[RMDB]
The record gives the reactivity of an RNA of 177 nucleotides to DMS and 2A3.
RNA sequence: GGGAACGACUCGAGUAGAGUCGAAAAGAAUACGCGUCGACGAUAAUGUUCGUAUGGCUAACAUCUGUUAUACUUGAGUAAUUAGAUGUAUUACUCUACUUUUUGUGGAUUCAUUAUCGUCGUUGCAGGGUUCCGUAGUCUUCGGAUUACGGAACCCAAAAGAAACAACAACAACAAC
Reactivity to DMS in 0.01 (KOAc 150mM, MgCl2 10mM, bicine 150mM(pH8.5), 24C), signal-to-noise 2, nucleotides 027 to 126: g000a140a110u030a100c160g000c010g030u010c000g000a000c000g010a000u000a010a010u010g000u000u010c160g010u000a010u000g010g020c110u050a090a110c120a060u010c090u020g000u010u000a020u000a010c180u040u020g010a110g040u000a010a010u030u020a020g010a090u010g020u030a020u000u000a000c010u020c000u010a000c020u010u020u000u030u040g000u000g010g010a100u050u000c010a010u000u000a000u010c000g040u000c000g000u000u050g000c000a210
Reactivity to 2A3 in 0.01 (KOAc 150mM, MgCl2 10mM, bicine 150mM(pH8.5), 24C), signal-to-noise 9, nucleotides 027 to 126: g100a060a050u210a080c100g000c000g010u020c000g000a000c000g000a000u000a000a000u020g020u020u040c030g010u050a030u060g050g030c060u070a100a030c030a200u080c070u050g010u000u020a030u020a060c040u100u150g050a030g040u010a010a010u040u130a070g130a260u160g060u130a030u030u020a020c010u000c010u020a040c020u070u150u100u160u300g140u140g070g040a070u090u000c000a000u010u000a010u000c000g010u000c000g000u000u030g000c010a000
For 2A3, 12,715 sequencing reads were counted. The reactions ran in a buffer of 150 mM KOAc, 10 mM MgCl2 and 150 mM bicine (pH 8.5), at 24 C.